RNA sequence: GGGAACGACUCGAGUAGAGUCGAAAAGCUCCGUGCGACUGCUGCUGAUGGGAUCAGGAUCCACAGUCUCUCUAAGCAUGAUUUUAAUAGCCCUCAACAUUAACAUCCUGGUGCGAUGUGCACAACAACGCAUUCUAAUCUCGCUUAGCUCACUGCACAAAUCUCUUACUUUCGAGUAAGAGAUUUGAAAAGAAACAACAACAACAAC
Reactivity to 2A3 in 0.01 (KOAc 150mM, MgCl2 10mM, bicine 150mM(pH8.5), 24C), signal-to-noise 7, nucleotides 027 to 156: g040c020u040c050c050g030u060g020c030g040a060c040u060g030c020u020g000c020u050g040a140u080g040g020g020a030u080c030a040g080g020a060u020c030c010a030c020a050g060u020c020u000c000u000c020u090a050a020g010c010a060u090g080a140u090u050u060u180a200a210u120a070g030c030c010c000u070c060a040a080c030a100u060u150a060a030c010a030u020c010c030u040g000g030u040g000c020g030a070u050g030u040g030c090a050c020a180a100c020a040a020c050g000c020a010u090u030c030u100a040a090u040c040u020c060g040c060u030u040a010g020c040u050c030a060c050u060g010c070a010
Reactivity to DMS in 0.01 (KOAc 150mM, MgCl2 10mM, bicine 150mM(pH8.5), 24C), signal-to-noise 3, nucleotides 027 to 156: g030c060u000c040c050g020u000g010c030g030a070c060u010g000c040u000g000c000u000g000a130u010g020g010g030a230u000c030a100g000g010a160u010c030c070a050c020a100g010u000c030u040c020u000c040u000a100a110g010c020a130u000g000a110u000u030u000u000a050a120u000a150g020c010c030c010u000c040a060a100c050a070u010u000a060a110c040a070u000c010c050u010g030g020u000g010c070g010a070u000g020u000g000c040a110c070a050a120c040a080a060c050g000c020a060u000u000c090u000a070a060u010c030u010c040g010c050u020u000a080g020c050u000c020a100c010u000g020c040a200
An RNA of 207 nucleotides, treated with 2A3 and DMS and read out base by base. Conditions: 150 mM KOAc, 10 mM MgCl2 and 150 mM bicine (pH 8.5), 24 C. For 2A3, 5,559 sequencing reads were counted. The DMS profile rests on 5,174 reads.